[RMDB]
RNA sequence: GGGAACGACUCGAGUAGAGUCGAAAAAUUCGCCGAGAAGCCUCUGUUCGAAAUCAUCGGGAGUGAUCCAGAUGACGGUCCUGCCGUGAGACCGCAACGAGAGCAUGUCGCAUCGAAUGGACUCGGGUAUACUAGGUGACGUUCGCGUCACCUAGAACUAGUAUUACUCAUUCGUGAGUAAUACUAGAAAAGAAACAACAACAACAAC
Reactivity to 2A3 in 0.01 (KOAc 150mM, MgCl2 10mM, bicine 150mM(pH8.5), 24C), signal-to-noise 9, nucleotides 027 to 156: a000u100u050c030g020c010c000g010a010g030a070a040g060c030c030u030c080u090g030u030u030c020g020a060a060a110u030c030a030u070c040g010g030g010a030g020u160g040a080u040c010c020a060g030a140u100g050a090c030g010g000u000c010c010u060g160c050c030g050u050g020a100g010a030c030c020g010c060a040a030c060g070a020g010a020g110c050a060u170g060u070c040g000c070a050u020c020g020a010a030u050g020g010a010c000u010c020g020g000g050u080a080u040a160c000u000a000g000g000u000g000a010c010g010u010u050c220g010c000g080u000c000a000c000c000u000a000g000a000a000
Reactivity to DMS in 0.01 (KOAc 150mM, MgCl2 10mM, bicine 150mM(pH8.5), 24C), signal-to-noise 4, nucleotides 027 to 156: a130u010u000c030g010c060c000g010a080g020a070a100g010c060c030u000c020u010g020u000u000c020g000a060a120a080u000c010a040u000c020g020g020g010a080g010u010g010a200u000c020c020a060g000a060u010g010a050c030g000g000u010c010c030u010g020c030c230g000u000g010a040g010a040c040c020g010c040a070a080c030g000a120g010a150g000c080a090u000g010u000c040g000c040a210u010c020g010a050a260u000g000g010a080c000u000c000g010g010g010u000a090u000a130c010u000a020g010g030u000g010a010c010g030u000u000c300g020c000g010u000c000a010c000c000u000a000g000a030a170
Structure probing data (2A3 and DMS) for a 207-nucleotide construct.
The RNA was probed in 150 mM KOAc, 10 mM MgCl2 and 150 mM bicine (pH 8.5) at 24 C.
Reactivities are given for positions 27 through 156.
It was measured as part of the RMDB library M2RFPK.